[RMDB]
Overview: Structure probing data (DMS) for a 177-nucleotide construct. Source: RMDB libraries RFM100 and RFMREP, as collected in RNAgym.
RNA sequence: GGGAACGACUCGAGUAGAGUCGAAAAGAAAGAAAGAAAGGCCAGUUUGGGGGACAGGGCAAGGUGGGCAGUAGCUGACAGCCUGUUUACACUUGCCCUUUUUUCCCCAGGCUAUAGUUCGGUUGAAAAUGUAGCUAGCUUUCGAGCUAGCUACAUUAAAAGAAACAACAACAACAAC
Reactivity to DMS in 0.01 (KOAc 150mM, MgCl2 10mM, bicine 150mM(pH8.5), 24C), signal-to-noise 2, nucleotides 027 to 126: g020a140a110a060g030a060a050a070g010a040a090a110g010g020c080c210a040g020u000u020u010g030g040g030g010g000a010c300a010g000g000g000c000a000a000g010g050u000g000g000g030c000a000g000u040a040g000c000u020g000a090c230a100g010c040c000u000g000u000u000u000a030c000a030c000u000u010g000c000c000c000u000u000u070u010u010u020c000c000c000c000a040g000g000c010u010a070u010a050g010u020u000c060g020g010u000u000g000a050a040
Reactivities are given for positions 27 through 126.
The reactions ran in a buffer of 150 mM KOAc, 10 mM MgCl2 and 150 mM bicine (pH 8.5), at 24 C.
For DMS the reverse transcriptase was MarathonRT.